[RMDB]
RNA sequence: GGGAACGACUCGAGUAGAGUCGAAAAAUACCGGCAGCCCGAGUGAUGACCGCUAUUAUUGGGCCUAAAGCGUCCGUAGCUGGCCAGGCAAGUCCAUCGGGAAAUCCGCGCGCCCAACGCGCGGGCGUACCGAGACACUUUUCGAAGUGUCUCGGUAAAAAGAAACAACAACAACAAC
Reactivity to 2A3 in 0.01 (KOAc 150mM, MgCl2 10mM, bicine 150mM(pH8.5), 24C), signal-to-noise 2, nucleotides 027 to 126: a000u090a030c030c000g020g000c050a040g100c000c020c030g040a020g090u120g080a110u060g030a060c000c050g060c010u020a050u150u030a110u130u290g030g020g000c000c000u250a250a150a010g050c090g020u050c070c000g010u020a020g010c080u090g010g010c030c000a010g050g050c050a100a030g030u010c030c000a050u020c030g000g000g000a020a050a000u000c000c000g000c010g000c000g020c000c000c030a010a030c040g000c000g000c000g000g000g000c030g030
Reactivity to DMS in 0.01 (KOAc 150mM, MgCl2 10mM, bicine 150mM(pH8.5), 24C), signal-to-noise 2, nucleotides 027 to 126: a070u070a090c050c060g040g040c080a160g000c010c000c000g000a040g000u010g000a030u010g000a090c010c070g020c040u030a040u010u040a130u060u050g020g040g000c010c020u020a050a120a140g050c110g010u000c000c000g020u050a050g000c060u000g030g000c000c020a050g010g000c130a080a190g010u000c030c010a120u000c050g010g000g040a050a060a090u020c000c000g020c000g050c000g000c020c020c060a060a220c000g040c000g010c010g000g000g000c110g010